[RMDB]
RNA sequence: GGGAACGACUCGAGUAGAGUCGAAAAUGAUUUCAGACCAUCCGAUGAGGGUAAUGAAAUGAGUCUCAAGAAAGCCAAGCGGAAGCCCCCUGUCCAGCGCGUAGGGCAAGCUGCUGACUCGGCGGUCUCAACAGGAAAAUUUCGAUUUUCCUGUUGAAAAAGAAACAACAACAACAAC
Reactivity to DMS in 0.01 (KOAc 150mM, MgCl2 10mM, bicine 150mM(pH8.5), 24C), signal-to-noise 9, nucleotides 027 to 126: u010g010a030u010u000u000c010a040g010a120c230c080a040u000c020c200g010a120u020g010a250g000g000g000u010a060a160u000g010a010a020a020u010g000a110g010u000c010u000c020a130a130g010a060a070a130g010c010c010a020a030g000c020g010g010a210a030g010c020c060c010c010c030u000g010u010c030c030a120g020c270g010c130g010u000a030g000g000g000c030a120a130g000c010u000g010c020u000g000a130c010u000c030g000g010c030g010g010u000c070
Reactivity to 2A3 in 0.01 (KOAc 150mM, MgCl2 10mM, bicine 150mM(pH8.5), 24C), signal-to-noise 3, nucleotides 027 to 126: u050g010a020u030u010u030c020a010g040a060c060c000a020u020c000c030g140a140u260g050a100g030g010g020u050a090a140u030g030a000a030a000u050g030a040g070u010c000u000c040a050a110g110a140a060a010g020c020c010a020a000g000c010g010g000a020a000g010c060c000c020c020c000u000g100u040c020c020a090g140c070g040c040g080u010a010g000g010g000c010a000a010g000c000u020g000c000u030g020a240c010u000c040g010g010c000g030g020u000c010
Source: RMDB library OK2TST, as collected in RNAgym. Chemical mapping of a 177-nucleotide RNA with DMS and 2A3. The 2A3 profile rests on 5,736 reads. The DMS profile rests on 12,429 reads. Conditions: 150 mM KOAc, 10 mM MgCl2 and 150 mM bicine (pH 8.5), 24 C.